[RMDB]
Chemical mapping of a 177-nucleotide RNA with DMS and 2A3.
2A3 adducts were read by reverse transcription with SuperScript II with manganese.
The reactions ran in a buffer of 150 mM KOAc, 10 mM MgCl2 and 150 mM bicine (pH 8.5), at 24 C.
DMS adducts were read by reverse transcription with MarathonRT.
RNA sequence: GGGAACGACUCGAGUAGAGUCGAAAACGGACGGCUAUACGUAGCCGUCCGAAACGUGACGAAAAGUCACGAAAAGGUCGGAGAGAAAAGCACCAUGGACUCAACCGACUAAAACCAAAGGUGCGAAAUCAGUUUUACCUUUCGAGGUAAAACUGAUAAAAGAAACAACAACAACAAC
Reactivity to DMS in 0.01 (KOAc 150mM, MgCl2 10mM, bicine 150mM(pH8.5), 24C), signal-to-noise 2, nucleotides 027 to 126: c010g040g000a010c010g010g020c020u000a110u000a040c230g000u000a000g000c000c000g020u000c020c000g050a000a010a090c040g000u010g000a000c010g000a100a000a050a060g000u000c000a000c000g000a040a130a200a160g000g000u010c000g000g000a290g020a000g000a160a080a140a150g050c000a000c010c010a220u020g000g060a250c040u040c050a050a070c030c000g000a040c070u000a060a040a090a200c020c090a120a030a080g000g000u000g000c010g020a090a100
Reactivity to 2A3 in 0.01 (KOAc 150mM, MgCl2 10mM, bicine 150mM(pH8.5), 24C), signal-to-noise 4, nucleotides 027 to 126: c000g000g000a000c000g010g010c000u020a010u020a100c270g160u010a000g000c010c000g020u000c000c000g000a010a000a000c000g000u010g010a000c010g050a050a130a110a140g000u000c000a000c000g000a050a050a000a020g060g000u000c000g010g020a010g000a000g020a040a110a020a000g020c000a010c000c010a110u130g100g040a080c010u000c020a080a180c070c000g000a000c040u100a080a110a070a020c050c020a090a040a030g000g000u000g010c020g020a120a090